[RMDB]
RNA sequence: GGGAACGACUCGAGUAGAGUCGAAAAUGUUGUCUUCGGACAACAAAAAAAGCGUACUACAAGCGCCAAUAAGCUAUGAAGUAGGUAAGUCCCAAAUAGGAUAUCCUAUGGAGCUUAAAAAUGCUUGUAUCGCAAAAAAUGGGUGUUCGCACCCAAAUCUGUAUAGCUCGUUCGCGAGCUAUACAGAAAAAGAAACAACAACAACAAC
Reactivity to 2A3 in 0.01 (KOAc 150mM, MgCl2 10mM, bicine 150mM(pH8.5), 24C), signal-to-noise 1, nucleotides 027 to 156: u030g000u000u000g000u000c000u030u050c300g050g020a030c020a020a000c100a160a170a000a000a000a000a000g020c020g000u070a030c010u010a010c030a000a000g000c000g010c000c000a010a020u000a000a000g000c000u020a050u300g000a030a000g040u000a000g000g070u080a300a120g090u060c080c020c060a130a180a090u230a020g000g000a000u010a010u230c000c000u040a030u010g000g010a000g000c000u010u010a010a000a010a010a010u010g000c000u000u000g040u000a020u030c010g030c000a000a000a000a000a000a300u140g000g010g020u040g040u080u050c210g040c070a010c040c000c060a020a060a070
Chemical mapping of a 207-nucleotide RNA with 2A3. The data come from the RNA Mapping Database (RMDB), library RNAMAK. For 2A3 the reverse transcriptase was SuperScript II with manganese.